[RMDB]
RNA sequence: GGGAACGACUCGAGUAGAGUCGAAAAAGCGAUGAUACGUCAUCGCAACGAUUGCCUGAUCGUAAAACAGGAGACGGCCGUGGCCGCGACCACGUAAAAAAGCGUAACGUGGUCUAUGGACCACGAAAAAAGCGCGGAACGUUCGCGUUCCGCGCAACCAAAAUAUCUCCUUCGGGAGAUAUUUUGGAAAAGAAACAACAACAACAAC
Reactivity to 2A3 in 0.01 (KOAc 150mM, MgCl2 10mM, bicine 150mM(pH8.5), 24C), signal-to-noise 1, nucleotides 027 to 156: a010g010c000g010a000u010g010a000u010a080c200g070u020c010a010u010c010g020c000a000a040c000g020a030u000u070g020c000c000u000g020a010u010c020g090u160a050a050a000a000c010a020g020g020a030g090a070c080g050g020c090c030g000u010g000g010c020c010g000c020g010a010c000c030a000c060g020u070a000a000a020a000a050a030g090c020g030u030a040a020c010g010u000g000g000u000c040u090a240u220g070g030a080c000c010a000c000g050a020a000a000a000a000a000g000c010g000c000g000g000a000a010c010g000u090u110c200g020c050g070u000u030c000c020g050c000g050c000a000a010

Source: RMDB library M2RFPK, as collected in RNAgym. This 207-nucleotide RNA was probed chemically with 2A3. The RNA was probed in 150 mM KOAc, 10 mM MgCl2 and 150 mM bicine (pH 8.5) at 24 C. For 2A3 the reverse transcriptase was SuperScript II with manganese.